[RMDB]
RNA sequence: GGGAACGACUCGAGUAGAGUCGAAAAACCUAUGGAUUCGUCCAUAGGUGCUGGCGCGCGGGCUUUGUCCUGUCGCGUGUGCGUGGUGGGCGAUAUACGCGCAAUAGUGACAAUUCGUUGUCACUAAAGAUUUAUGAACUUUCGAGUUCAUAAAUCUAAAAGAAACAACAACAACAAC
Reactivity to DMS in 0.01 (KOAc 150mM, MgCl2 10mM, bicine 150mM(pH8.5), 24C), signal-to-noise 6, nucleotides 027 to 126: a030c000c000u000a000u000g000g010a030u000u010c160g010u000c000c000a000u000a010g010g010u000g010c070u010g010g010c040g010c000g010c030g000g000g010c030u010u010u010g010u010c010c010u000g000u010c010g020c000g030u000g010u010g020c020g030u000g000g010u000g000g010g010c080g010a090u010a090u010a060c040g010c030g010c070a130a180u000a010g000u000g010a020c000a010a030u000u020c190g010u000u000g000u000c000a010c000u000a010a070
Reactivity to 2A3 in 0.01 (KOAc 150mM, MgCl2 10mM, bicine 150mM(pH8.5), 24C), signal-to-noise 5, nucleotides 027 to 126: a010c010c000u000a000u000g000g000a010u020u100c170g030u010c050c000a000u010a010g010g010u020g080c060u050g080g010c010g000c000g000c010g010g030g000c060u220u150u250g050u150c000c000u030g070u200c010g000c000g020u040g030u040g020c020g010u040g010g050u060g030g080g040c040g010a020u030a010u020a180c020g010c000g000c000a020a070u080a050g000u000g010a000c010a010a020u030u050c210g060u080u010g000u000c000a000c000u010a060a110